[RMDB]
RNA sequence: GGGAACGACUCGAGUAGAGUCGAAAACAGAGCAACAAGGCCGCCGAGAACUUCCGUGCCUGGCUGGACGGCCUGGGUGCCACCAGUGAACGGCUGCCGGAAGGUUCGUUUAUGGACCCAGCGCUACGACGAUUAUCCCAUUCGUGGGAUAAUCGUCAAAAGAAACAACAACAACAAC
Reactivity to DMS in 0.01 (KOAc 150mM, MgCl2 10mM, bicine 150mM(pH8.5), 24C), signal-to-noise 2, nucleotides 027 to 126: c090a140g000a050g030c030a060a110c080a250a110g000g000c020c090g030c050c020g020a090g000a160a070c030u000u000c060c130g010u010g010c000c020u000g010g000c010u010g000g000a120c120g030g010c010c020u000g040g000g000u000g020c000c010a090c060c090a020g010u000g000a140a100c150g000g010c040u010g040c190c000g000g010a020a060g000g000u000u000c010g000u000u000u000a090u010g000g000a180c020c000c030a080g000c090g000c060u000a070c150
Reactivity to 2A3 in 0.01 (KOAc 150mM, MgCl2 10mM, bicine 150mM(pH8.5), 24C), signal-to-noise 2, nucleotides 027 to 126: c030a020g040a010g030c010a030a100c010a000a080g000g000c010c000g000c010c010g070a050g010a070a030c020u020u000c060c010g020u010g000c000c000u030g000g000c040u060g040g150a160c140g020g000c010c040u160g040g050g080u140g030c010c000a030c020c040a020g020u010g050a060a010c000g010g000c030u040g060c080c000g000g000a010a030g070g000u010u020c010g000u000u070u110a180u170g050g020a100c010c000c000a050g010c060g010c050u110a090c100
Conditions: 150 mM KOAc, 10 mM MgCl2 and 150 mM bicine (pH 8.5), 24 C. Structure probing data (DMS and 2A3) for a 177-nucleotide construct. For 2A3 the reverse transcriptase was SuperScript II with manganese. Values cover nucleotides 27 to 126. For DMS the reverse transcriptase was MarathonRT. The 2A3 profile rests on 2,181 reads.